[RMDB]
RNA sequence: GGGAACGACUCGAGUAGAGUCGAAAAAGUGGCUCCUUACGAGGAGCCACACUCUGGGAGAGUCAAACAAACUUGAUUAGCAGCUUAUUUUAUAAGUUGUGAAAGAGGACUCGAAGAAAGGAGAAAAACGGAUUGUAAGGUUCGCCUUACAAUCCGUAAAAGAAACAACAACAACAAC
Reactivity to DMS in 0.01 (KOAc 150mM, MgCl2 10mM, bicine 150mM(pH8.5), 24C), signal-to-noise 2, nucleotides 027 to 126: a070g050u000g000g010c000u010c000c010u000u010a070c220g070a070g010g010a010g070c020c000a040c010a000c010u000c000u010g020g000g000a140g010a000g000u020c000a270a020a250c300a160a130a300c000u020u010g000a010u050u010a180g000c000a010g000c000u000u000a010u000u000u000u140a050u000a000a010g000u000u000g000u000g040a100a000a300g020a000g030g020a000c000u000c000g010a110a080g020a100a200a170g000g020a010g000a080a040a030a070
Reactivity to 2A3 in 0.01 (KOAc 150mM, MgCl2 10mM, bicine 150mM(pH8.5), 24C), signal-to-noise 2, nucleotides 027 to 126: a000g000u010g000g020c000u030c000c010u040u050a090c260g140a040g000g000a000g020c000c000a040c030a000c000u010c000u010g010g000g000a060g000a000g000u050c030a030a040a070c080a030a110a070c030u020u020g010a000u040u040a000g000c000a000g000c000u030u020a030u030u210u060u020a130u040a040a000g010u010u000g010u020g000a000a000a000g000a000g000g070a010c000u010c010g000a050a000g000a030a020a000g100g020a020g020a020a070a030a000

About this RNA: An RNA of 177 nucleotides, treated with DMS and 2A3 and read out base by base. For DMS, 2,131 sequencing reads were counted. The reactions ran in a buffer of 150 mM KOAc, 10 mM MgCl2 and 150 mM bicine (pH 8.5), at 24 C. It was measured as part of the RMDB library RFM100. DMS adducts were read by reverse transcription with MarathonRT.